[RMDB]
RNA sequence: GGGAACGACUCGAGUAGAGUCGAAAAGAUAUGGAGCCAUCCAUGACCCUCGGUGGGUCGGAAACGACCCAUGGCCGAGCAUGGAGUGGCUCCUAAGUCAAAACGCCACAAGUUCGCUUGUGGCGAAGAACAUCGAUACCUUCGGGUAUCGAUGUUCAAAAGAAACAACAACAACAAC
Reactivity to DMS in 0.01 (KOAc 150mM, MgCl2 10mM, bicine 150mM(pH8.5), 24C), signal-to-noise 1, nucleotides 027 to 126: g000a050u000a300u030g030g000a000g050c030c000a100u000c000c000a020u020g000a270c190c170c010u000c040g070g000u010g000g020g000u010c000g000g000a060a100a250c020g000a030c020c000c000a110u000g160g010c010c010g000a020g030c010a000u010g000g000a040g050u040g010g030c000u010c000c000u000a000a090g000u000c070a290a110a170a210c000g020c000c000a000c000a000a000g000u000u000c300g010c000u000u030g020u000g000g010c000g000a000a000

Chemical mapping of a 177-nucleotide RNA with DMS. Reactivities are given for positions 27 through 126. DMS adducts were read by reverse transcription with MarathonRT. For DMS, 687 sequencing reads were counted. It was measured as part of the RMDB library TTRDES.